[RMDB]
RNA sequence: GGGAACGACUCGAGUAGAGUCGAAAAAAAAGCCCUUGACACAAUGUGAUUUCUGCCCAGUGCUCUGAAUGUCAAAGUGAAGAGAUUCAACCUAGCACGGGUAAACGGCGGGAGUAACUAUGACUCUGGUGUUCCUUUAAUUCGUUAAAGGAACACCAAAAGAAACAACAACAACAAC
Reactivity to DMS in 0.01 (KOAc 150mM, MgCl2 10mM, bicine 150mM(pH8.5), 24C), signal-to-noise 1, nucleotides 027 to 126: a080a030a110a000g030c000c000c000u000u050g020a110c200a020c170a010a070u000g020u000g020a080u000u000u000c000u000g040c050c000c040a100g000u000g010c000u010c240u000g000a000a000u010g000u000c080a160a120a050g010u050g000a070a000g010a000g000a050u000u000c000a000a100c300c140u000a080g000c000a040c000g020g010g070u000a000a000a030c140g000g040c150g080g000g000a000g030u000a020a040c020u000a070u090g000a100c160u020c080u010
Reactivity to 2A3 in 0.01 (KOAc 150mM, MgCl2 10mM, bicine 150mM(pH8.5), 24C), signal-to-noise 4, nucleotides 027 to 126: a000a000a000a000g060c060c000c020u050u110g070a080c060a010c020a110a220u150g020u030g080a070u000u030u030c000u040g010c000c010c010a080g020u010g000c000u000c010u050g060a110a040u140g080u090c070a140a100a040g120u120g150a070a080g000a030g010a040u010u010c030a070a060c060c050u090a020g020c030a010c050g000g000g010u000a000a070a000c030g010g000c000g000g020g000a030g030u010a060a050c070u030a070u220g140a040c030u010c050u030

Source: RMDB library RFM100, as collected in RNAgym. An RNA of 177 nucleotides, treated with DMS and 2A3 and read out base by base. For DMS, 1,205 sequencing reads were counted.